[RMDB]
RNA sequence: GGGAACGACUCGAGUAGAGUCGAAAAAGUACAUCAAAAGAGGAAACAGAGGGAAAGAACCAGGUUGGCAAACAAGCAAAAAGGCAAGGACGAACCUUCCUCAAGCACUGAAUGUUUUGCGAGUGAACGAGUAACAUGCUUUCGAGCAUGUUACUCGAAAAGAAACAACAACAACAAC
Reactivity to DMS in 0.01 (KOAc 150mM, MgCl2 10mM, bicine 150mM(pH8.5), 24C), signal-to-noise 3, nucleotides 027 to 126: a050g010u030a030c060a080u020c090a070a030a110a060g000a110g000g020a110a030a080c100a100g010a090g000g000g010a010a050a030g000a050a120c050c080a080g000g020u000u000g020g000c040a010a050a040c040a060a070g000c040a000a010a100a060a010g030g000c140a030a020g010g010a160c160g010a070a110c060c010u000u000c060c000u000c080a040a070g020c020a040c110u010g000a080a060u000g010u010u000u010u010g000c000g000a070g000u020g010a060a150
Reactivity to 2A3 in 0.01 (KOAc 150mM, MgCl2 10mM, bicine 150mM(pH8.5), 24C), signal-to-noise 3, nucleotides 027 to 126: a010g120u130a050c030a040u100c090a050a030a060a000g110a010g000g070a070a090a040c030a020g050a060g020g000g010a020a030a070g000a020a020c000c030a020g040g050u040u030g060g000c020a010a000a050c000a090a000g060c020a010a000a000a050a050g060g040c080a020a010g000g020a040c110g030a060a160c000c020u020u000c000c000u020c040a030a000g030c020a010c050u090g020a080a070u110g070u000u050u020u050g040c020g010a050g020u080g050a070a010
This 177-nucleotide RNA was probed chemically with DMS and 2A3.
Conditions: 150 mM KOAc, 10 mM MgCl2 and 150 mM bicine (pH 8.5), 24 C.
Source: RMDB libraries RFM100 and RFMREP, as collected in RNAgym.
2A3 adducts were read by reverse transcription with SuperScript II with manganese.
Reactivities are rounded to 0.1 and cut off at 0 and 3.
The 2A3 profile rests on 2,019 reads.